[RMDB]
RNA sequence: GGGAACGACUCGAGUAGAGUCGAAAAGUCUCCUAGAGAGCUUGGCCUUCGGGCCUUACACCCCGACUUGCUGAGUUUCUCUAGGAGAGUCCCUUUCCCAGCCAGAGGUGGCUGGUCAAACAAUACCAAAACUCUUGCUAGUUCGCUAGCAAGAGAAGCUAAAGCAUUACUUCGGUAAUGCUUUAGCAAAAGAAACAACAACAACAAC
Reactivity to 2A3 in 0.01 (KOAc 150mM, MgCl2 10mM, bicine 150mM(pH8.5), 24C), signal-to-noise 1, nucleotides 027 to 156: g010u000c000u000c000c000u000a000g010a000g010a000g010c000u000u020g000g010c000c000u000u000c010g040g030g000c000c030u040u110a080c090a080c000c000c010c000g010a030c090u130u190g000c000u000g010a000g020u170u300u010c000u000c000u000a000g000g000a000g000a000g000u010c000c010c000u000u080u050c010c000c000a000g000c000c000a010g000a000g000g030u000g020g000c010u180g070g060u280c050a000a000a020c050a110a020u000a010c000c000a020a020a080a150c000u010c000u010u000g010c000u000a000g000u050u010c200g030c100u000a000g010c000a000a000g000a000g000a040a010